[RMDB]
RNA sequence: GGGAACGACUCGAGUAGAGUCGAAAACGAGAGCGAUUCGUCGCUCUCGAAAGAGUGGACGGCAGCACAAGAAAAGCCGAAGAAAAGCAGAGCCGACUGCAAAAACUCCCAUGUUCGCAUGGGAGAAGAAUGUCUUGAUGUUCGCAUCAAGACAUUCAAAAGAAACAACAACAACAAC
Reactivity to DMS in 0.01 (KOAc 150mM, MgCl2 10mM, bicine 150mM(pH8.5), 24C), signal-to-noise 2, nucleotides 027 to 126: c010g020a020g000a010g020c000g020a010u010u010c230g010u000c000g000c000u000c000u000c010g000a040a060a080g010a120g030u000g050g010a160c020g000g010c020a050g000c050a060c110a060a100g000a070a050a120a120g010c000c020g000a040a050g010a040a090a130a150g000c020a020g010a150g010c100c150g010a150c020u010g010c030a050a020a060a130a150c000u000c010c010c000a000u000g010u000u020c160g020c040a010u000g000g010g000a010g000a010a020
Reactivity to 2A3 in 0.01 (KOAc 150mM, MgCl2 10mM, bicine 150mM(pH8.5), 24C), signal-to-noise 2, nucleotides 027 to 126: c000g000a010g000a000g000c020g010a010u060u090c160g020u010c020g080c000u010c010u000c000g000a000a000a000g060a030g060u080g000g050a020c000g000g010c000a060g060c020a080c050a200a090g090a130a170a020a010g010c010c060g050a090a020g100a000a130a020a010g000c010a010g040a030g100c040c070g110a090c010u030g020c000a020a030a010a060a210c000u000c000c000c000a010u010g020u060u080c210g010c090a000u000g000g040g000a010g000a010a000

Structure probing data (DMS and 2A3) for a 177-nucleotide construct. For DMS, 1,015 sequencing reads were counted. The RNA was probed in 150 mM KOAc, 10 mM MgCl2 and 150 mM bicine (pH 8.5) at 24 C.